Record summary:
Source: RMDB library M2RFPK, as collected in RNAgym. Structure probing data (2A3) for a 207-nucleotide construct. For 2A3 the reverse transcriptase was SuperScript II with manganese. Reactivities are given for positions 27 through 156. The reactions ran in a buffer of 150 mM KOAc, 10 mM MgCl2 and 150 mM bicine (pH 8.5), at 24 C.
[RMDB]
RNA sequence: GGGAACGACUCGAGUAGAGUCGAAAAACGAUAACGAGGCGCUCGCUAUUGCUGCGUAACUGACGGCGUGACGGUCUGACGUUACAAAGCUAAAGCGCGGUUGGACCCCACCGGGCAACAGAAGGGGAAAGGCGACCCCGUUUCGACGGGGUCGCAAGCGUAACAAUAACUUCGGUUAUUGUUACGCAAAAGAAACAACAACAACAAC
Reactivity to 2A3 in 0.01 (KOAc 150mM, MgCl2 10mM, bicine 150mM(pH8.5), 24C), signal-to-noise 1, nucleotides 027 to 156: a000c070g030a050u160a110a020c060g000a050g110g020c060g010c040u110c050g010c030u070a120u240u240g010c000u000g000c000g000u000a000a000c010u050g020a020c020g000g030c010g070u160g140a080c050g030g030u020c020u010g040a010c030g000u020u000a000c000a010a010a000g000c000u010a030a040a020g020c000g010c010g000g000u030u110g210g030a030c000c030c000c000a000c010c010g130g110g020c040a080a020c000a010g010a010a000g050g000g010g050a110a040a020g150g000c000g020a000c000c000c000c000g020u030u100u000c080g030a020c000g000g000g000g000u000c000g000c000a000a000